Structure probing data (2A3 and DMS) for a 177-nucleotide construct. The 2A3 profile rests on 2,763 reads. In probing experiments dimethyl sulfate is read out at A N1 and C N3, which are open when not base-paired. The RNA was probed in 150 mM KOAc, 10 mM MgCl2 and 150 mM bicine (pH 8.5) at 24 C. For DMS, 1,052 sequencing reads were counted.
[RMDB]
RNA sequence: GGGAACGACUCGAGUAGAGUCGAAAAACACACGAGCACACGCCCGCUUGGUGUGCACGUGUCCUCUACACAACAGUCGGAUAGAGUACACGAAAAGAGCGACGGCAACUCCUGCGCCAGAGCGGCAGGACUCCACCGUAUUCGUACGGUGGAGUCCAAAAGAAACAACAACAACAAC
Reactivity to 2A3 in 0.01 (KOAc 150mM, MgCl2 10mM, bicine 150mM(pH8.5), 24C), signal-to-noise 4, nucleotides 027 to 126: a000c110a000c010a020c060g110a030g020c010a000c000a000c000g000c010c000c000g000c010u030u040g000g030u040g000u010g030c010a000c000g010u000g010u030c010c000u000c000u020a030c130a010c000a190a160c040a130g210u210c080g090g010a040u010a040g030a010g000u030a010c010a010c000g040a010a030a020a070g100a020g030c000g210a240c030g020g020c030a050a100c030u070c070c020u090g030c010g000c020c000a030g020a000g040c010g000g000c070a070
Reactivity to DMS in 0.01 (KOAc 150mM, MgCl2 10mM, bicine 150mM(pH8.5), 24C), signal-to-noise 1, nucleotides 027 to 126: a140c300a100c090a090c190g000a060g000c000a060c050a000c090g000c000c000c040g140c000u010u000g000g040u000g000u130g030c150a150c000g000u000g000u000c100c000u000c000u000a000c050a110c090a050a160c300a140g000u000c120g030g100a300u000a000g000a000g070u030a000c160a080c000g000a040a000a060a000g000a130g040c020g000a130c100g000g000c100a040a050c170u000c000c000u000g000c040g040c140c020a000g000a120g040c000g030g020c300a040